[RMDB]
Overview
An RNA of 207 nucleotides, treated with DMS and read out base by base.

RNA sequence: GGGAACGACUCGAGUAGAGUCGAAAACUAAAUCUUAAUAGUUACACACAAACUGAAAAUUAAAAUAACACUAUUUAGUUGGUGGUCGCCAUGGAUGGUGUUAUUGUAUACUGUCUAAACGCGUUAGUAAAACAUGGCGAGGAAAUAAAUCAUAUAAUAAUGCCAUAGCAUUCGUGCUAUGGCAUUAAAAAGAAACAACAACAACAAC
Reactivity to DMS in 0.01 (KOAc 150mM, MgCl2 10mM, bicine 150mM(pH8.5), 24C), signal-to-noise 2, nucleotides 027 to 156: c010u000a030a110a120u000c100u000u000a090a120u000a050g030u000u010a130c040a110c030a090c030a090a070a290c050u010g000a050a150a090a140u000u010a060a030a040a020u010a010a030c000a060c010u010a100u010u000u000a070g000u000u000g010g000u010g030g000u000c020g010c030c000a050u000g010g000a060u000g030g020u000g020u010u010a030u000u000g030u000a120u000a080c080u000g030u000c030u000a020a120a120c080g020c080g040u000u000a140g000u010a090a030a120a140c030a020u000g020g010c010g020a080g030g010a070a040a100u000a060a040a050u010c000a070u010a100u000a090a140
The reactions ran in a buffer of 150 mM KOAc, 10 mM MgCl2 and 150 mM bicine (pH 8.5), at 24 C. Source: RMDB library OK3TST, as collected in RNAgym.